[RMDB]
RNA sequence: GGGAACGACUCGAGUAGAGUCGAAAAGGGCGGCCUUUCGAGGCCGCCCAAUGGAAGCCAAGGCGAAAGGCAUUUUAUUCCUUGGCUGGCGAAAGCCUAAAAAACGGAUCUUGUUCGCAAGAUCCAAUAACAUAGCUAAAUUCGUUUAGCUAUGUUAAAAAGAAACAACAACAACAAC
Reactivity to 2A3 in 0.01 (KOAc 150mM, MgCl2 10mM, bicine 150mM(pH8.5), 24C), signal-to-noise 2, nucleotides 027 to 126: g010g000g030c030g000g060c030c050u070u100u100c180g070a010g020g030c020c000g020c010c000c000a000a000u010g000g060a030a000g010c000c000a010a000g030g010c040g080a090a000a000g070g000c030a020u050u060u010u130a110u130u040c000c000u000u010g010g000c020u000g010g000c020g060a080a010a010g000c000c030u120a110a110a000a000a030a010c110g000g000a000u010c000u020u010g020u070u050c170g000c090a000a010g000a000u000c000c000a000a010
Reactivity to DMS in 0.01 (KOAc 150mM, MgCl2 10mM, bicine 150mM(pH8.5), 24C), signal-to-noise 6, nucleotides 027 to 126: g010g020g030c000g040g020c000c010u000u000u010c130g020a030g020g030c010c010g040c000c000c000a000a020u000g010g010a190a060g020c000c000a020a020g000g020c300g010a030a040a050g010g010c250a090u020u000u000u000a120u010u010c010c000u000u000g000g000c000u000g000g000c040g010a110a090a130g020c010c010u010a000a040a070a060a070a070c220g000g000a010u000c000u000u000g000u000u010c160g020c010a020a010g000a010u000c000c000a040a030

An RNA of 177 nucleotides, treated with 2A3 and DMS and read out base by base. 2A3 is a SHAPE reagent: it acylates the 2'-hydroxyl of flexible nucleotides of all four kinds. The reactions ran in a buffer of 150 mM KOAc, 10 mM MgCl2 and 150 mM bicine (pH 8.5), at 24 C. 2A3 adducts were read by reverse transcription with SuperScript II with manganese.